[RMDB]
RNA sequence: GGGAACGACUCGAGUAGAGUCGAAAAGGGACAUGAAGCCCAUCACUGUGGGGGGCAAGAUCGUGGGGUCCCUGUGUGCCAUUGCAGGUGUGUUAACCAUUGCUUUGCCAGUGCCAGUGAUUGUCUCCAAUAUGGCUAGCUUCGGCUAGCCAUAUUGAAAAGAAACAACAACAACAAC
Reactivity to 2A3 in 0.01 (KOAc 150mM, MgCl2 10mM, bicine 150mM(pH8.5), 24C), signal-to-noise 1, nucleotides 027 to 126: g000g000g000a000c030a010u160g100a060a060g040c000c020c000a010u020c010a000c010u060g010u160g150g150g030g000g000g030c010a010a030g020a080u070c030g070u040g020g030g070g020u010c010c000c020u010g000u030g010u030g080c030c060a070u040u200g060c000a010g020g000u040g020u060g000u180u080a020a000c010c000a000u030u070g030c040u070u060u010g080c040c010a050g030u070g300c000c000a010g010u000g000a070u030u070g010u000c000u000c020
Reactivity to DMS in 0.01 (KOAc 150mM, MgCl2 10mM, bicine 150mM(pH8.5), 24C), signal-to-noise 3, nucleotides 027 to 126: g000g020g010a020c020a040u010g010a130a190g030c010c010c010a220u000c010a020c020u000g010u000g020g000g030g000g010g000c020a040a030g010a070u010c150g010u000g010g020g020g010u010c100c010c010u000g010u000g000u010g020c140c150a090u000u000g010c010a040g010g030u010g010u010g000u000u010a190a130c030c000a030u000u000g010c050u000u000u000g000c020c010a060g030u010g010c120c010a050g010u000g010a070u000u000g010u000c010u000c020
Chemical mapping of a 177-nucleotide RNA with 2A3 and DMS.